[RMDB]
RNA sequence: GGGAACGACUCGAGUAGAGUCGAAAACUAUUGAUAUACCGAAUAUCAAUAAUGAUGGGUGCACUGGCGCCACUAUAUUGACGGUUAUAUCUACUGUUAUGGCAUUCAUUGUGUUCUUGUCGAUAUUUGAACAAAUGAUUAAUUAAACAUUAAACUACAAUACUCGUAUCUUCGGAUACGAGUAUUGAAAAGAAACAACAACAACAAC
Reactivity to DMS in 0.01 (KOAc 150mM, MgCl2 10mM, bicine 150mM(pH8.5), 24C), signal-to-noise 2, nucleotides 027 to 156: c080u000a040u010u000g000a040u000a020u000a300c020c060g000a210a150u000a210u000c020a030a010u010a020a170u000g020a120u020g020g070g050u000g080c050a220c160u010g070g010c060g000c000c020a080c030u010a130u000a050u000u000g020a050c020g000g000u000u000a050u000a010u000c050u000a090c100u010g000u000u000a070u000g000g000c050a150u000u000c010a080u000u000g030u000g040u020u000c020u010u000g010u000c140g010a170u000a100u010u000u000g020a020a010c000a030a020a050u000g000a130u000u000a060a190u000u000a080a090a140c050a090u000u000a030a040a140c020u000a180
Reactivity to 2A3 in 0.01 (KOAc 150mM, MgCl2 10mM, bicine 150mM(pH8.5), 24C), signal-to-noise 5, nucleotides 027 to 156: c020u040a060u090u200g000a010u000a000u010a010c020c010g050a150a120u130a030u160c010a010a000u070a060a060u090g080a090u110g090g030g040u050g000c070a070c300u230g250g000c030g000c020c000a030c010u100a110u010a000u090u010g010a000c000g000g040u110u080a010u000a000u020c030u050a040c060u070g050u130u070a080u140g090g020c070a050u000u070c010a010u030u060g190u000g010u160u010c000u040u090g150u170c090g090a140u110a190u250u110u160g020a020a000c000a020a030a000u010g030a010u000u130a090a100u060u140a130a090a040c010a030u110u190a010a100a120c030u040a030
An RNA of 207 nucleotides, treated with DMS and 2A3 and read out base by base. 2A3 adducts were read by reverse transcription with SuperScript II with manganese. Conditions: 150 mM KOAc, 10 mM MgCl2 and 150 mM bicine (pH 8.5), 24 C. Source: RMDB library OK3TST, as collected in RNAgym.